Structure probing data (2A3) for a 207-nucleotide construct. It was measured as part of the RMDB library OK3TST. The 2A3 profile rests on 987 reads.
[RMDB]
RNA sequence: GGGAACGACUCGAGUAGAGUCGAAAAGCUACUUAGGAGGCUGAGAUGGGAGGAUUGAUUGAGCUGGAGAGGUCAAGGCUGCAGUGAGCUGUGAUCUCACCACUGCACCCUAGCCUGGGCAACAGAGCAAGAUCCUGUCUCAGACAAACAAAAAUUCCUCUGAAGUUGGAUUCGUCCAACUUCAGAGAAAAGAAACAACAACAACAAC
Reactivity to 2A3 in 0.01 (KOAc 150mM, MgCl2 10mM, bicine 150mM(pH8.5), 24C), signal-to-noise 2, nucleotides 027 to 156: g050c020u060a050c070u160u080a090g020g090a070g120g000c010u010g020a030g000a000u010g040g020g010a010g160g030a060u030u040g020a030u020u020g030a040g080c010u050g090g070a190g040a020g130g030u070c030a030a030g010g000c040u000g000c000a020g000u020g030a070g010c160u030g050u130g170a150u090c100u060c120a010c000c000a000c000u000g000c010a000c000c000c000u010a010g010c000c030u030g090g010g000c020a060a020c010a080g100a010g070c010a030a000g020a020u020c010c000u000g020u000c010u020c000a000g000a010c000a020a090a000c020a000a080a070a020a070u290u230c070